[RMDB]
RNA sequence: GGGAACGACUCGAGUAGAGUCGAAAAUAAUGCAAGGUAUUUUUGCAAAUCAAAGUUAUGAAGAUAUUCUUAAAGGUUAUAGGCCUUGGUAUAUUAGGUAGAUUAAUGGUUUUUAGGAAAAAUUAUGCAUCUGCCCUAUAUUCGUAUAGGGCAGAUGAAAAGAAACAACAACAACAAC
Reactivity to DMS in 0.01 (KOAc 150mM, MgCl2 10mM, bicine 150mM(pH8.5), 24C), signal-to-noise 1, nucleotides 027 to 126: u000a120a120u000g000c070a060a030g030g020u010a000u010u010u010u010u000g020c030a010a060a080u000c040a100a120a170g000u000u000a050u000g010a140a150g000a020u000a000u000u000c010u010u010a070a030a020g000g010u000u000a120u010a150g020g010c020c000u000u000g000g010u000a030u000a070u000u000a060g020g000u000a070g010a050u020u010a070a050u000g000g020u020u000u000u000u020a120g020g000a050a050a050a170a050u000u000a050u000g000